Record summary: Structure probing data (2A3 and DMS) for a 177-nucleotide construct.
RNA sequence: GGGAACGACUCGAGUAGAGUCGAAAACUGAUGGUGGACAGCAAUUUGCCGUAGAAACCCUCGGGGGUCCAGUUCAGGGUGCUGAUCUUGCCGCCGCGCCGGCAGACCCGGGCCAGUUCGUCGGCGGCACGUGCGAGAAGUUCGCUUCUCGCACGUGAAAAGAAACAACAACAACAAC
Reactivity to 2A3 in 0.01 (KOAc 150mM, MgCl2 10mM, bicine 150mM(pH8.5), 24C), signal-to-noise 1, nucleotides 027 to 126: c050u070g010a080u100g040g010u040g010g070a020c020a010g110c060a100a190u100u050u180g040c010c020g020u060a030g150a130a090a020c010c020c010u030c070g040g020g030g020g050u040c040c050a010g020u100u070c010a020g090g040g000u080g130c050u030g020a130u050c010u050u110g010c000c000g030c010c020g020c000g000c010c050g010g000c040a020g040a120c010c010c010g020g030g090c020c010a010g080u140u150c080g090u070c020g000g000c000g040g000
Reactivity to DMS in 0.01 (KOAc 150mM, MgCl2 10mM, bicine 150mM(pH8.5), 24C), signal-to-noise 3, nucleotides 027 to 126: c050u010g020a080u000g000g010u000g010g000a110c070a080g010c060a090a150u010u010u010g020c020c030g010u000a110g010a140a140a120c040c030c030u010c070g020g000g010g010g010u010c040c040a080g010u010u000c060a070g000g010g020u000g020c050u010g000a070u000c050u010u000g000c010c000g010c010c010g010c040g020c210c060g000g010c020a040g000a120c020c010c020g000g010g000c010c010a050g000u010u010c070g020u000c010g020g010c010g000g000

Overview
Values cover nucleotides 27 to 126. For 2A3 the reverse transcriptase was SuperScript II with manganese. Conditions: 150 mM KOAc, 10 mM MgCl2 and 150 mM bicine (pH 8.5), 24 C. It was measured as part of the RMDB library OK2TST.